[RMDB]
RNA sequence: GGGAACGACUCGAGUAGAGUCGAAAAGGGCCAAACGGUCUGAGGCUACGUGCUUGGUAUGUGAAAUCUUUAGCCCCUCAGUGUCCACAGGAAAACAAUGCUCCAGACCGAAUACUCCUGUGUGCGAAGCGUAUUAUCGAUUCGUCGAUAAUACGCUAAAAGAAACAACAACAACAAC
Reactivity to DMS in 0.01 (KOAc 150mM, MgCl2 10mM, bicine 150mM(pH8.5), 24C), signal-to-noise 8, nucleotides 027 to 126: g000g010g020c020c050a110a100a220c050g000g010u000c010u020g000a070g010g010c020u020a110c180g010u010g000c070u010u030g020g000u010a040u020g000u020g010a070a090a080u020c040u010u010u010a100g010c020c000c000c040u020c100a100g010u030g010u010c080c010a020c010a020g000g000a030a080a080a120c190a080a060u020g010c040u010c040c020a030g000a050c020c010g010a100a080u030a080c130u010c000c010u010g000u000g000u020g000c040g000a090
Reactivity to 2A3 in 0.01 (KOAc 150mM, MgCl2 10mM, bicine 150mM(pH8.5), 24C), signal-to-noise 9, nucleotides 027 to 126: g010g010g030c020c010a090a090a020c040g000g010u000c000u000g020a050g040g020c020u080a050c140g110u120g040c050u080u090g060g040u130a120u120g100u030g100a060a080a090u060c020u020u120u080a060g010c000c000c000c010u070c030a100g050u060g030u110c010c000a010c000a020g010g060a020a080a050a020c080a080a130u160g010c010u020c030c010a010g010a030c000c010g010a030a060u090a050c020u000c010c000u010g000u000g040u050g030c040g030a030